[RMDB]
RNA sequence: GGGAACGACUCGAGUAGAGUCGAAAAAGAAAGAGAGCGUAGCACACACAGAGACUAAGUCUGACACACACCUACGCUACAUGUGUGUGUGAAGUCGAGAUAUCGACAAGUGUGUGUGAUGAAAAAACAGUUAUAUCAACUUCGGUUGAUAUAACUGAAAAGAAACAACAACAACAAC
Reactivity to 2A3 in 0.01 (KOAc 150mM, MgCl2 10mM, bicine 150mM(pH8.5), 24C), signal-to-noise 6, nucleotides 027 to 126: a000g090a020a050a010g110a000g010a010g060c040g020u020a010g000c000a000c010a000c000a000c010a010g030a010g010a090c030u110a160a060g030u000c010u030g040a000c000a000c000a000c000a000c000c010u070a030c050g040c080u080a020c060a060u060g050u010g000u010g000u000g000u010g050a060a010g010u000c010g010a020g010a150u220a060u130c010g000a010c020a060a080g010u010g000u000g000u000g000u010g020a050u080g020a060a070a030a000a010a000
Reactivity to DMS in 0.01 (KOAc 150mM, MgCl2 10mM, bicine 150mM(pH8.5), 24C), signal-to-noise 6, nucleotides 027 to 126: a060g010a070a070a070g000a090g000a090g010c040g020u000a080g000c000a010c010a010c000a010c000a040g000a050g010a020c020u010a120a120g010u000c000u000g010a290c000a010c000a010c010a020c000c030u000a020c040g010c150u010a070c130a050u000g000u010g010u000g010u000g000u000g000a040a140g010u000c010g000a020g020a190u020a110u010c000g010a010c010a060a100g010u000g010u000g020u000g010u000g000a070u000g000a000a030a050a070a050a110